[RMDB]
RNA sequence: GGGAACGACUCGAGUAGAGUCGAAAAUUAAGUACAGAGAAGUGAAAAGAAGAAAAUCCAGUUAUAACCUAGAGAUCCAGAGAGUCAUUUUGGCAUUCAUCCAUCCACAUUCUUGUUCUGCAAUCUGCUUUGUUUUUGUUUACCCAUAGGUUGUAAACCUAUUAACUGGUUUCGACCAGUUAAUAGGAAAAGAAACAACAACAACAAC
Reactivity to DMS in 0.01 (KOAc 150mM, MgCl2 10mM, bicine 150mM(pH8.5), 24C), signal-to-noise 2, nucleotides 027 to 156: u010u010a070a150g020u000a160c050a090g000a120g000a080a080g020u040g000a050a050a120a130g020a080a150g000a040a070a130a110u000c010c030a090g020u000u000a110u000a060a130c030c020u000a130g020a130g030a080u010c030c040a110g010a100g000a100g040u040c020a110u020u000u000u000g030g050c020a090u010u000c030a080u000c020c020a080u000c020c030a050c010a110u010u000c030u010u000g000u000u000c030u000g000c050a090a060u020c040u010g020c040u000u000u000g020u000u000u000u000u010g010u020u000u000a140c020c010c010a080u000a090g030g010u000u000g050u010a060a080a220
Reactivity to 2A3 in 0.01 (KOAc 150mM, MgCl2 10mM, bicine 150mM(pH8.5), 24C), signal-to-noise 3, nucleotides 027 to 156: u050u030a040a000g040u030a050c040a030g060a030g040a130a020g040u050g050a050a070a020a040g080a060a030g040a020a080a010a010u060c050c040a020g020u080u070a160u060a220a070c010c020u020a040g010a010g000a120u020c010c020a000g040a000g010a010g120u030c050a050u090u070u080u100g030g000c010a020u070u060c010a030u000c020c020a030u000c020c020a040c000a090u080u070c040u070u070g050u070u050c010u030g000c010a040a070u000c000u030g040c010u050u040u030g030u020u020u000u020u060g060u050u100u090a070c010c000c010a040u140a110g090g010u020u030g010u080a070a070a090